[RMDB]
RNA sequence: GGGAACGACUCGAGUAGAGUCGAAAAUGUCUGUUCGCAGACAGAUGAUCCUAAGUCGAGCUGGAGUAAGUAGCUCAUCGAUCACUGUCGGAAACGACAGUGGGAGAGCGAUCUUACGUUGAAAGCUCGAUAUGGACGUGGGAGGAUUCGUCCUCAAUCGUAACUGUUGUUUCGACAACAGUUACGAAAAAGAAACAACAACAACAAC
Reactivity to 2A3 in 0.01 (KOAc 150mM, MgCl2 10mM, bicine 150mM(pH8.5), 24C), signal-to-noise 3, nucleotides 027 to 156: u040g010u000c000u010g020u050u160c300g050c120a020g000a050c010a010g060a010u200g030a140u040c000c000u060a130a020g020u010c000g000a000g000c000u020g030g000a040g020u000a000a010g010u020a010g000c020u000c020a120u290c040g020a020u020c000a000c000u000g000u000c000g030g000a050a040a010c000g010a000c000a010g000u000g000g010g000a050g010a000g000c000g020a180u170c000u000u000a010c000g020u050u070g050a010a010a000g000c000u000c000g010a000u000a020u010g010g000a000c010g070u140g080g120g030a000g020g050a020u030u090c160g060u000c020c010u010c020a040a110
Reactivity to DMS in 0.01 (KOAc 150mM, MgCl2 10mM, bicine 150mM(pH8.5), 24C), signal-to-noise 2, nucleotides 027 to 156: u000g010u000c000u020g020u000u020c240g000c100a070g010a030c000a060g010a100u000g020a080u000c020c000u000a110a270g000u000c010g020a020g000c030u000g000g000a230g020u000a000a020g000u000a220g020c010u000c000a250u000c160g000a200u000c000a020c000u000g030u000c000g010g000a140a190a120c010g010a000c000a010g010u000g000g010g000a060g010a020g000c000g000a240u010c000u000u000a000c000g010u010u010g000a170a150a130g000c000u010c000g010a000u000a130u000g000g010a020c050g020u000g000g000g000a050g010g000a170u000u020c070g020u000c010c000u000c020a060a200